[RMDB]
RNA sequence: GGGAACGACUCGAGUAGAGUCGAAAAGUCACGACGGGGAAAUCGAUCCCUUCGGGGAGGGGCCUGCCGUAGAGAUCGGCCGUCAACCGGAGGAGGGCGAGAUCCCGCACCUCGUCCUCGAGGAUCAUAUCAUUGAUACGUUCGCGUAUCAAUGAUAAAAAGAAACAACAACAACAAC
Reactivity to DMS in 0.01 (KOAc 150mM, MgCl2 10mM, bicine 150mM(pH8.5), 24C), signal-to-noise 6, nucleotides 027 to 126: g020u000c080a090c100g000a080c080g000g000g010g010a060a100a180u010c070g000a060u000c000c010c010u010u000c020g000g000g010g000a280g000g010g010g010c060c020u000g020c100c060g010u020a090g000a150g010a050u010c220g010g010c000c050g000u000c050a170a210c060c030g000g010a060g020g010a050g010g010g010c010g000a030g000a130u010c030c020c030g020c120a090c090c000u000c000g010u000c030c050u000c040g030a080g010g000a090u000c110a170
Reactivity to 2A3 in 0.01 (KOAc 150mM, MgCl2 10mM, bicine 150mM(pH8.5), 24C), signal-to-noise 3, nucleotides 027 to 126: g090u050c040a020c140g120a040c040g080g020g010g060a050a090a100u100c030g020a030u000c000c000c000u000u020c040g020g010g000g040a080g030g060g010g010c010c030u060g020c050c020g100u120a060g050a010g020a290u080c010g020g010c010c020g260u040c060a050a050c020c020g010g030a040g010g030a070g010g020g010c010g000a010g010a020u080c010c010c000g000c010a020c010c000u010c000g010u020c020c000u030c020g000a040g010g010a030u070c020a060